The record gives the reactivity of an RNA of 177 nucleotides to 2A3 and DMS. As a SHAPE reagent, 2A3 marks flexible, mostly unpaired nucleotides at the ribose 2'-OH. The 2A3 profile rests on 749 reads. Values cover nucleotides 27 to 126.

[RMDB]
RNA sequence: GGGAACGACUCGAGUAGAGUCGAAAACAAUGAGGAUUGGUCGUACUCGAGGGUGUCUUCUAGGAUCCCCAGAGGAGCUACUCCACCUGAAUGGUGAGUCGCUGCAUCUGCAGCCACUCGAUGUAUGAUCUACGGUUGCGUUCGCGCAACCGUAGAUAAAAGAAACAACAACAACAAC
Reactivity to 2A3 in 0.01 (KOAc 150mM, MgCl2 10mM, bicine 150mM(pH8.5), 24C), signal-to-noise 2, nucleotides 027 to 126: c050a000a200u240g010a040g140g070a180u060u050g100g000u110c030g030u020a000c000u000c010g010a080g000g000g000u090g070u090c000u150u000c000u080a130g130g000a020u010c040c040c000c000a000g070a010g040g040a000g020c000u000a000c000u000c130c000a070c020c000u240g040a130a110u300g020g000u040g000a000g000u030c070g010c060u040g060c000a130u120c110u300g050c000a040g000c000c040a080c000u030c000g000a070u150g000u080a080u100g010
Reactivity to DMS in 0.01 (KOAc 150mM, MgCl2 10mM, bicine 150mM(pH8.5), 24C), signal-to-noise 1, nucleotides 027 to 126: c170a110a060u090g040a100g020g030a080u000u000g000g000u000c060g090u000a030c000u000c050g000a060g030g000g000u030g000u020c050u010u000c090u030a160g010g000a040u040c070c000c010c050a070g000a110g020g040a080g050c100u040a100c030u000c040c080a000c000c000u000g000a120a120u000g030g020u010g000a050g020u000c300g000c000u010g010c020a080u020c180u000g000c010a060g000c030c000a230c000u000c040g000a000u000g000u020a050u000g000
2A3 adducts were read by reverse transcription with SuperScript II with manganese. The RNA was probed in 150 mM KOAc, 10 mM MgCl2 and 150 mM bicine (pH 8.5) at 24 C.